[RMDB]
RNA sequence: GGGAACGACUCGAGUAGAGUCGAAAAGAAAGAAAGUACUGAAAGUAUUGUGGGAAAUAAUGUGUCAAUCAUUGACCGUUCCUGCGCUGGUAAGAAUAAAAUUUUAGUCCAGACACCACCAGUAUAACCAAUCUAGUGACCUUCGGGUCACUAGAAACAAGUGAUUUAUCUUCGGAUAAAUCACUUGAAAAGAAACAACAACAACAAC
Reactivity to 2A3 in 0.01 (KOAc 150mM, MgCl2 10mM, bicine 150mM(pH8.5), 24C), signal-to-noise 4, nucleotides 027 to 156: g050a010a120a010g050a060a130a020g030u030a040c010u020g030a110a110a070g050u070a180u240u180g010u070g020g020g040a080a060a090u190a040a090u130g160u060g010u060c020a030a100u090c080a210u090u090g010a010c010c010g030u020u030c000c010u030g010c050g000c030u020g020g010u040a040a060g060a090a030u140a110a150a070a080u060u090u070u100a060g010u000c020c000a010g010a040c020a030c050c000a000c010c000a000g010u020a020u040a140a020c080c050a020a070u000c000u000a000g000u000g010a000c010c000u020u050c230g030g000g000u010c000a000c000u000a000g000a000a000a000
Reactivity to DMS in 0.01 (KOAc 150mM, MgCl2 10mM, bicine 150mM(pH8.5), 24C), signal-to-noise 2, nucleotides 027 to 156: g020a070a120a190g010a070a130a210g010u010a030c010u000g010a070a140a140g020u010a030u000u010g040u020g020g060g010a050a080a020u010a000a050u010g000u000g010u000c000a050a180u000c210a130u010u000g000a030c020c010g000u010u000c000c000u000g010c000g070c050u000g010g020u010a190a120g030a110a130u000a040a050a060a300u000u000u000u000a130g000u010c010c000a050g010a180c050a190c010c020a050c110c010a050g020u000a070u010a040a150c010c010a020a130u010c000u000a000g020u010g020a010c000c020u000u000c300g010g070g020u000c010a000c000u010a020g000a010a050a070
The record gives the reactivity of an RNA of 207 nucleotides to 2A3 and DMS. The reactions ran in a buffer of 150 mM KOAc, 10 mM MgCl2 and 150 mM bicine (pH 8.5), at 24 C. The data come from the RNA Mapping Database (RMDB), library M2RFPK. For 2A3, 2,327 sequencing reads were counted. High 2A3 reactivity points to a flexible backbone, as in loops and unpaired stretches. Reactivities are given for positions 27 through 156. Values are in units of 0.01, from 0 to 300, in steps of 10. For 2A3 the reverse transcriptase was SuperScript II with manganese.